[RMDB]
RNA sequence: GGGAACGACUCGAGUAGAGUCGAAAAUUUUUUUUAAACUAUCAGGUCUAGAUAGGGUCAAAGUCCUCACACCAGUGUGAAGUUUAGAAUCUAGCCCUUAGCUUCACCCUUUUUAUCACCAAAGUCCAACUAACUAAACCACGUUAAAUUAUCAGGACAUUAAAUUACGUUUCGACGUAAUUUAAUGAAAAGAAACAACAACAACAAC
Reactivity to 2A3 in 0.01 (KOAc 150mM, MgCl2 10mM, bicine 150mM(pH8.5), 24C), signal-to-noise 3, nucleotides 027 to 156: u040u060u010u010u010u010u060u130a070a090a040c030u050a070u100c030a060g030g110u030c040u060a040g020a060u050a010g040g000g000u020c030a040a050a060g060u060c000c020u050c020a030c010a000c010c040a040g020u030g000u000g130a030a050g020u030u050u100a080g020a150a090u040c070u030a050g030c020c010c010u030u020a010g010c000u020u010c000a020c010c030c000u020u190u020u060u100a100u070c080a040c080c020a070a060a010g050u000c010c020a040a010c050u070a000a030c020u080a120a050a040c030c010a030c030g030u050u070a060a120a120u130u110a090u130c040a020g020g020a010
Reactivity to DMS in 0.01 (KOAc 150mM, MgCl2 10mM, bicine 150mM(pH8.5), 24C), signal-to-noise 2, nucleotides 027 to 156: u000u000u000u000u000u040u000u020a070a060a110c020u010a030u000c050a040g020g010u000c040u000a030g020a070u000a040g040g020g020u000c030a040a090a100g030u000c030c020u000c020a070c020a110c040c100a100g020u000g010u010g010a040a080g020u010u010u010a040g000a090a080u000c050u000a090g000c050c020c000u000u000a070g010c020u000u000c070a070c010c050c040u010u000u030u000u010a100u010c020a070c020c000a030a060a090g010u000c010c010a040a110c100u000a050a050c040u000a040a050a090c030c030a040c080g030u010u010a030a060a080u000u000a070u000c050a060g020g020a250